[RMDB]
RNA sequence: GGGAACGACUCGAGUAGAGUCGAAAAGGGUGUAGGCGUAGUCGUUGGGGUAAUUGACGGUGCCGGUGGGCAGCAGUUGCUCGGUGUCGUGCGUCUCGUGCCUGAAUUCCAGGCUGCGGUAAGGCAAUGUAUAAUUCACCUUCGGGUGAAUUAUACAAAAAGAAACAACAACAACAAC
Reactivity to DMS in 0.01 (KOAc 150mM, MgCl2 10mM, bicine 150mM(pH8.5), 24C), signal-to-noise 4, nucleotides 027 to 126: g010g010g010u000g010u000a070g000g000c040g010u000a080g010u000c060g000u000u010g020g010g010g020u000a040a080u000u000g010a080c110g010g010u000g020c020c030g030g020u010g010g020g040c040a090g020c060a060g010u000u000g000c040u000c020g010g010u010g010u000c030g000u010g000c070g020u000c020u000c080g020u000g000c010c010u000g010a080a170u010u000c090c020a060g000g000c030u000g020c050g000g000u010a060a070g010g010c090a090a150
Reactivity to 2A3 in 0.01 (KOAc 150mM, MgCl2 10mM, bicine 150mM(pH8.5), 24C), signal-to-noise 2, nucleotides 027 to 126: g030g010g030u060g050u120a050g050g000c040g030u040a010g040u050c030g040u030u100g030g010g000g020u050a070a050u080u090g080a070c060g050g020u040g030c030c040g020g010u050g040g040g000c000a020g000c010a040g020u120u060g030c020u040c070g040g030u070g030u070c030g000u030g070c010g030u020c030u010c020g010u040g050c000c010u020g010a070a080u160u080c030c010a020g020g010c010u050g010c000g040g050u060a040a010g040g000c020a040a020